[RMDB]
RNA sequence: GGGAACGACUCGAGUAGAGUCGAAAACAUUAGCAUAUUAUCCUCGAUCCCACAUGGGCUAAUUGCAUGGUGAAGGACACUAUAUGCUGAAUUCAACUCCAUGGUGGAAGAACCUGAGGCAUACUCAGACACAUAUGGAGUUCGCUCCAUAUGUGUCAAAAGAAACAACAACAACAAC
Reactivity to 2A3 in 0.01 (KOAc 150mM, MgCl2 10mM, bicine 150mM(pH8.5), 24C), signal-to-noise 4, nucleotides 027 to 126: c040a060u090u130a020g050c040a040u080a050u200u080a070u080c010c010u000c030g050a100u070c020c020c000a020c020a050u060g010g040g000c050u090a110a080u120u100g010c020a030u030g040g030u060g030a190a040g140g060a040c010a020c100u100a060u000a010u280g020c010u010g060a090a060u100u070c050a040a030c030u000c010c020a030u060g070g050u040g050g030a130a110g020a070a060c020c030u080g010a010g020g000c010a070u090a110c010u020c050a010
Reactivity to DMS in 0.01 (KOAc 150mM, MgCl2 10mM, bicine 150mM(pH8.5), 24C), signal-to-noise 4, nucleotides 027 to 126: c130a090u000u000a020g000c010a060u010a050u010u000a110u000c000c010u000c060g030a110u010c060c030c030a070c110a010u010g000g010g020c090u020a020a050u010u000g020c050a070u010g000g010u000g010a100a080g010g010a150c090a050c100u010a030u010a040u010g010c020u010g000a070a130u010u000c140a060a080c090u000c010c020a030u000g000g040u000g010g010a060a070g020a120a100c150c050u000g000a060g000g040c250a100u000a100c060u010c080a080